This 177-nucleotide RNA was probed chemically with 2A3 and DMS. The data come from the RNA Mapping Database (RMDB), library OK1LIB. 2A3 adducts were read by reverse transcription with SuperScript II with manganese. For 2A3, 632 sequencing reads were counted. Conditions: 150 mM KOAc, 10 mM MgCl2 and 150 mM bicine (pH 8.5), 24 C.

[RMDB]
RNA sequence: GGGAACGACUCGAGUAGAGUCGAAAACGUAUCAUUCCUGCAAAGGCACGUGUUGAGUGCUAUGACAGGUUUAAAGUUAAUGAGACAAAUUCUCAAUAUUUGUUUAGUACUAUUAAUGCUCUACCAGUCCUGGUAUUGACUUCGGUCAAUACCAGGAAAAAGAAACAACAACAACAAC
Reactivity to 2A3 in 0.01 (KOAc 150mM, MgCl2 10mM, bicine 150mM(pH8.5), 24C), signal-to-noise 2, nucleotides 027 to 126: c140g000u090a060u300c070a040u060u010c020c000u000g000c000a000a000a190g090g020c000a000c030g060u220g060u190u160g150a130g060u000g020c000u020a040u080g030a070c010a040g020g000u000u020u180a060a030a000g000u050u120a060a060u090g030a000g000a030c030a000a060a040u200u000c090u060c220a000a080u300a120u140u050u120g000u000u020u000a090g030u070a040c020u020a090u200u090a120a000u040g000c000u000c000u030a120c040c020a020g100
Reactivity to DMS in 0.01 (KOAc 150mM, MgCl2 10mM, bicine 150mM(pH8.5), 24C), signal-to-noise 1, nucleotides 027 to 126: c120g030u000a050u030c160a150u000u000c030c000u010g000c140a070a110a250g000g000c000a060c010g000u020g010u060u000g000a210g040u030g030c010u000a130u010g000a270c040a030g000g010u020u000u000a030a150a140g000u000u020a000a060u000g000a080g000a010c020a030a080a000u020u020c120u020c080a050a240u000a030u000u000u030g000u000u000u020a130g000u000a060c050u000a290u030u000a000a010u000g000c000u000c090u000a000c050c050a190g000